Source: RMDB library VIROID, as collected in RNAgym. The record gives the reactivity of an RNA of 207 nucleotides to 2A3. The 2A3 profile rests on 1,769 reads. The reactions ran in a buffer of 150 mM KOAc, 10 mM MgCl2 and 150 mM bicine (pH 8.5), at 24 C.
RNA sequence: GGGAACGACUCGAGUAGAGUCGAAAAGGCUCAUCCCCAGGUCGAGGCGAGGGUCCUCAGUUCUCUCUAUUCUUUCCUUCUUGAAAGAGGAGACUGCUGGCCCAAACGCCCGAGCCGGGAUGGGCCGCAACCGGGCGAAAGAGGCGAAGUGGGGAGGCCGUUCCAUUAUGUUCGCAUAAUGGAACGGAAAAGAAACAACAACAACAAC
Reactivity to 2A3 in 0.01 (KOAc 150mM, MgCl2 10mM, bicine 150mM(pH8.5), 24C), signal-to-noise 2, nucleotides 027 to 156: g010g000c000u010c000a010u050c020c030c030c150a130g000g020u050c000g050a220g000g000c020g020a070g000g010g000u050c010c030u010c010a110g050u300u040c030u020c010u000c030u110a300u260u080c010u000u020u040c040c080u170u300c090u180u300g000a000a000a000g000a000g030g010a000g000a000c000u000g000c000u000g010g000c020c010c000a040a050a000c000g020c020c000c000g010a020g100c030c010g000g000g000a000u000g000g020g000c000c000g000c000a000a000c010c010g000g020g000c050g040a140a040a070g020a010g020g020c040g050a120a020g040u120g020g000g000g000a040g030g000